[RMDB]
The data come from the RNA Mapping Database (RMDB), library OK2TRN. Chemical mapping of a 177-nucleotide RNA with DMS and 2A3. The RNA was probed in 150 mM KOAc, 10 mM MgCl2 and 150 mM bicine (pH 8.5) at 24 C. Reactivities are given for positions 27 through 126. The DMS profile rests on 1,740 reads.

RNA sequence: GGGAACGACUCGAGUAGAGUCGAAAAGUCUUUGAAGCAUCAAUAUAGUAGGCAGUCAGCAGUUCACUAGUAAGGGAUCCAUGGAUUUUUCACCCAUCUCUAUAUUGUUGUGAUAAGUAGGCGGCUAGAGUUUAUCCGUAUUCGUACGGAUAAACUCAAAAGAAACAACAACAACAAC
Reactivity to DMS in 0.01 (KOAc 150mM, MgCl2 10mM, bicine 150mM(pH8.5), 24C), signal-to-noise 2, nucleotides 027 to 126: g030u010c030u000u000u000g000a150a290g000c020a040u000c030a020a030u000a020u000a020g020u010a050g030g010c060a080g010u000c120a080g010c040a140g010u000u010c030a070c080u000a140g000u020a090a050g010g000g000a050u010c040c080a040u000g000g010a070u000u000u010u010u030c130a120c050c010c050a030u000c030u000c030u010a030u000a050u000u000g010u000u000g000u000g000a110u010a070a040g030u010a070g010g010c070g010g040c150u000a120
Reactivity to 2A3 in 0.01 (KOAc 150mM, MgCl2 10mM, bicine 150mM(pH8.5), 24C), signal-to-noise 1, nucleotides 027 to 126: g020u000c020u080u070u090g040a000a000g000c020a000u020c010a030a020u050a020u060a060g250u110a000g050g010c050a020g130u110c040a010g020c000a040g000u080u000c030a040c170u060a020g090u140a140a080g030g030g020a030u000c080c000a000u050g050g040a090u070u050u030u230u120c050a100c040c010c000a040u000c010u070c010u010a060u000a030u070u020g000u020u040g010u020g030a010u010a110a080g160u120a060g000g010c040g040g040c040u120a090

DMS adducts were read by reverse transcription with MarathonRT.